[RMDB]
RNA sequence: GGGAACGACUCGAGUAGAGUCGAAAAAACAGCUGCUUCGGCAGCUGUUAACGCUCGCGGCUCGAGGCUGCACGAGCCGGACAGCAGCCAGUCCGCGAGCUUUAGCCUUGGAGUUCGCUCCAAGGAAGAGCCCUAUAGUAUUCGUACUAUAGGGCUCAAAAGAAACAACAACAACAAC
Reactivity to DMS in 0.01 (KOAc 150mM, MgCl2 10mM, bicine 150mM(pH8.5), 24C), signal-to-noise 3, nucleotides 027 to 126: a020a010c000a000g010c000u000g030c000u000u010c210g030g010c000a000g030c000u000g000u000u000a030a070c160g000c000u000c000g000c020g000g000c140u000c070g010a120g010g000c000u000g000c000a110c140g000a150g020c160c090g000g010a100c130a170g000c010a010g010c030c020a140g000u000c010c000g020c000g000a000g000c020u000u000u000a060g010c020c000u010u000g000g000a030g010u000u000c180g000c020u010c000c010a000a010g000g010a050a060
Reactivity to 2A3 in 0.01 (KOAc 150mM, MgCl2 10mM, bicine 150mM(pH8.5), 24C), signal-to-noise 2, nucleotides 027 to 126: a000a020c020a020g020c010u010g000c020u060u100c190g110g000c010a000g000c010u010g000u000u000a000a010c050g010c000u010c000g020c000g000g020c040u010c040g110a130g000g000c000u000g000c020a040c150g110a060g110c030c020g050g040a050c050a020g000c000a010g000c010c000a000g040u050c000c000g000c000g000a000g000c000u020u020u020a000g000c010c010u000u000g000g000a000g010u020u080c120g110c080u010c010c010a000a000g000g000a010a030
An RNA of 177 nucleotides, treated with DMS and 2A3 and read out base by base. 2A3 adducts were read by reverse transcription with SuperScript II with manganese. The DMS profile rests on 2,581 reads. The reactions ran in a buffer of 150 mM KOAc, 10 mM MgCl2 and 150 mM bicine (pH 8.5), at 24 C. For 2A3, 2,646 sequencing reads were counted.